[RMDB]
RNA sequence: GGGAACGACUCGAGUAGAGUCGAAAAAUAAAGUAGUCUCCUGCAGCGUCUGAGGUAUCCGUUGCAGUCCUCGGAACCAGGACCUCGGCGUGGCCUAGCGAGUUAUGGCGACGAAGGCCGUGAAAAAGAGCUGAACUAAGUUCGCUUAGUUCAGCUCAAAAGAAACAACAACAACAAC
Reactivity to DMS in 0.01 (KOAc 150mM, MgCl2 10mM, bicine 150mM(pH8.5), 24C), signal-to-noise 1, nucleotides 027 to 126: a120u010a050a030a130g010u010a050g000u000c060u000c020c020u000g020c090a130g010c090g030u000c020u010g000a010g000g010u010a050u000c040c030g010u010u000g030c090a110g030u020c050c020u000c110g010g000a070a100c060c080a110g000g000a010c100c000u000c010g000g000c040g030u000g000g000c040c060u010a200g020c030g000a090g000u030u000a070u030g020g030c010g010a100c040g000a110a030g010g000c010c000g030u000g000a070a040a040a060a090